[RMDB]
This 207-nucleotide RNA was probed chemically with DMS and 2A3.
It was measured as part of the RMDB library M2RFOK.
Conditions: 150 mM KOAc, 10 mM MgCl2 and 150 mM bicine (pH 8.5), 24 C.
The 2A3 profile rests on 3,047 reads.
RNA sequence: GGGAACGACUCGAGUAGAGUCGAAAAUCAGAAUCAGGCCGGAGAGUUUAGCGCUCCGUAAACACGGUCGUACAUCCAGCCGGUAGCCUGGUUCCUUGCAUUGAGUGAUGUACGGAGUUUAUAGAGCAAAAGAAAGACCUGUUCGCAGGUCUUUCAAGAGUUAAUUACUGUUCGCAGUAAUUAACUCAAAAGAAACAACAACAACAAC
Reactivity to DMS in 0.01 (KOAc 150mM, MgCl2 10mM, bicine 150mM(pH8.5), 24C), signal-to-noise 2, nucleotides 027 to 156: u010c050a080g000a100a030u000c020a020g010g020c010c070g000g000a090g000a120g020u000u000u010a150g020c100g000c000u000c000c010g000u000a040a030a090c070a130c000g040g000u000c010g000u000a040c020a020u000c030c000a240g040c040c030g050g010u010a090g010c050c000u000g010g010u000u000c000c010u010u000g010c070a160u000u020g010a110g040u000g020a040u000g020u000a010c030g010g000a170g020u010u000u000a070u000a080g000a120g020c040a120a060a070a160g010a010a040a020g000a010c000c000u000g010u000u000c300g010c040a020g010g010u000c010u000u000u000c000a030a110
Reactivity to 2A3 in 0.01 (KOAc 150mM, MgCl2 10mM, bicine 150mM(pH8.5), 24C), signal-to-noise 4, nucleotides 027 to 156: u080c010a000g020a000a010u000c010a000g020g000c010c030g030g010a020g000a000g030u090u130u300a160g050c090g000c050u000c000c000g000u040a010a070a010c090a010c060g050g040u050c010g000u030a000c000a050u010c040c000a010g030c010c000g020g020u030a020g000c000c000u020g000g010u010u000c020c010u060u130g040c010a110u060u200g030a050g070u130g030a020u010g000u010a010c010g050g020a070g020u120u180u030a100u090a070g090a020g040c060a080a040a090a040g010a010a010a000g000a010c000c000u010g010u030u040c090g000c070a000g000g000u000c000u000u000u000c000a010a000